The record gives the reactivity of an RNA of 207 nucleotides to 2A3. It was measured as part of the RMDB library M2RFPK.

[RMDB]
RNA sequence: GGGAACGACUCGAGUAGAGUCGAAAAAGACGGAAACCCAUCGACUGUCACCAGAUUCUGCAUCACCUGAUCACUGAUGGCUCAACGGUAUCCGGCGGUACAACUGAAUACUUGUAGCUGCCUUUUGAAAAGGAGUUCAUCUUCGGAUGAACUCCAAGUAAUGUAACGCCUUCGGGCGUUACAUUACAAAAGAAACAACAACAACAAC
Reactivity to 2A3 in 0.01 (KOAc 150mM, MgCl2 10mM, bicine 150mM(pH8.5), 24C), signal-to-noise 1, nucleotides 027 to 156: a000g150a020c120g030g090a210a000a010c000c000c000a090u050c020g050a100c020u020g020u040c030a000c020c010a060g050a150u100u010c010u110g000c050a000u010c010a060c040c020u020g010a030u020c040a010c010u040g020a040u060g050g020c060u020c020a060a040c070g000g020u030a050u100c060c010g010g000c020g020g020u050a010c010a020a000c070u030g090a130a050u080a210c020u030u050g020u010a010g080c010u010g000c000c000u000u160u200u180g060a060a110a030a030g000g000a000g000u020u000c000a000u000c000u010u030c070g070g020a040u000g010a010a000c000u020c000c010a000a000

Values cover nucleotides 27 to 156. The reactions ran in a buffer of 150 mM KOAc, 10 mM MgCl2 and 150 mM bicine (pH 8.5), at 24 C. For 2A3, 571 sequencing reads were counted.